[RMDB]
RNA sequence: GGGAACGACUCGAGUAGAGUCGAAAAGAUAUGGAGCCGAAACUUCUUUGAUCCGUAACAUCCAUCGGAAACGAUGGUGGGGGAGAAGUAGUAGGCUCCUAAGUCAAAAGUCCUGUUCGCAGGACAAGUGUCUUCUAGUGUUCGCACUAGAAGACACAAAAGAAACAACAACAACAAC
Reactivity to DMS in 0.01 (KOAc 150mM, MgCl2 10mM, bicine 150mM(pH8.5), 24C), signal-to-noise 1, nucleotides 027 to 126: g020a020u010a300u010g000g000a010g010c000c010g000a210a210a110c010u000u000c000u040u000u010g010a090u010c000c010g000u000a020a040c120a030u010c010c000a010u000c000g000g020a110a070a180c020g010a010u010g010g000u010g000g000g000g000g030a050g010a010a020g000u000a040g010u000a150g000g000c000u000c000c000u020a010a120g010u010c020a070a090a140a140g000u000c000c000u000g000u020u000c150g030c020a020g000g000a000c020a030a080
The data come from the RNA Mapping Database (RMDB), library TTRDEL. The record gives the reactivity of an RNA of 177 nucleotides to DMS. Reactivities are given for positions 27 through 126. The RNA was probed in 150 mM KOAc, 10 mM MgCl2 and 150 mM bicine (pH 8.5) at 24 C.